The record gives the reactivity of an RNA of 177 nucleotides to 2A3. 2A3 adducts were read by reverse transcription with SuperScript II with manganese. Reactivities are given for positions 27 through 126. The reactions ran in a buffer of 150 mM KOAc, 10 mM MgCl2 and 150 mM bicine (pH 8.5), at 24 C. Source: RMDB library RFM100, as collected in RNAgym.

[RMDB]
RNA sequence: GGGAACGACUCGAGUAGAGUCGAAAAAGGAUCGAAGACGAUUAGAGAGACCGUUGUAGUUCUAGCAGUAAACGAUGCCGAUACCGUGGUGCGGAUAGGCGACGCGGAAGAAAAAUCGAGUAGGGCCGGCUACUCGGUACUUCGGUACCGAGUAGCCAAAAGAAACAACAACAACAAC
Reactivity to 2A3 in 0.01 (KOAc 150mM, MgCl2 10mM, bicine 150mM(pH8.5), 24C), signal-to-noise 1, nucleotides 027 to 126: a000g010g000a060u030c000g000a090a000g110a070c000g000a130u000u100a000g020a000g030a000g000a120c000c020g000u000u040g020u020a060g070u020u030c030u020a100g030c160a060g060u300a010a000a260c070g060a020u020g000c010c020g020a000u000a100c020c020g000u100g040g110u160g010c010g000g010a040u000a050g030g040c020g000a000c010g030c000g110g000a110a000g040a030a120a020a110a110u090c090g000a000g040u000a080g000g060g130c060c000